[RMDB]
Structure probing data (DMS and 2A3) for a 177-nucleotide construct. Values are in units of 0.01, from 0 to 300, in steps of 10. For DMS the reverse transcriptase was MarathonRT. For 2A3 the reverse transcriptase was SuperScript II with manganese. The reactions ran in a buffer of 150 mM KOAc, 10 mM MgCl2 and 150 mM bicine (pH 8.5), at 24 C.
RNA sequence: GGGAACGACUCGAGUAGAGUCGAAAAACUAAGCGCCCGGAAAAAGGCUUAGUUGACGAGGAUGGAGGUUAUCGAAUUUCGCGGAUCCUCCCGGCUGAGUGUGCAGAUCACAGCCGUAAGAAUUUCUGCGUAUUAGGAUAUUCGUAUCCUAAUACGCAAAAGAAACAACAACAACAAC
Reactivity to DMS in 0.01 (KOAc 150mM, MgCl2 10mM, bicine 150mM(pH8.5), 24C), signal-to-noise 3, nucleotides 027 to 126: a000c010u000a000a000g010c010g020c020c000c000g100g040a050a060a020a020a000g000g010c000u000u000a010g000u000u000g020a220c220g000a100g010g000a280u010g010g000a010g000g010u030u020a110u010c010g010a120a170u020u040u010c120g000c100g000g000a180u010c000c000u000c000c020c010g010g000c010u000g000a070g020u000g030u030g000c160a120g000a080u010c040a090c010a020g000c010c000g010u020a040a030g000a120a130u010u000u020c060u020
Reactivity to 2A3 in 0.01 (KOAc 150mM, MgCl2 10mM, bicine 150mM(pH8.5), 24C), signal-to-noise 7, nucleotides 027 to 126: a000c000u000a000a000g000c000g000c020c010c000g300g060a190a170a000a010a000g000g000c000u000u000a000g000u000u030g030a020c130g040a050g210g010a050u080g010g000a010g040g000u090u100a100u180c020g030a090a140u140u210u150c200g010c050g110g010a030u060c000c000u000c000c000c000g000g000c010u040g010a100g130u070g010u100g080c100a050g030a190u160c000a000c000a020g010c000c000g000u010a000a020g020a040a080u030u060u050c040u020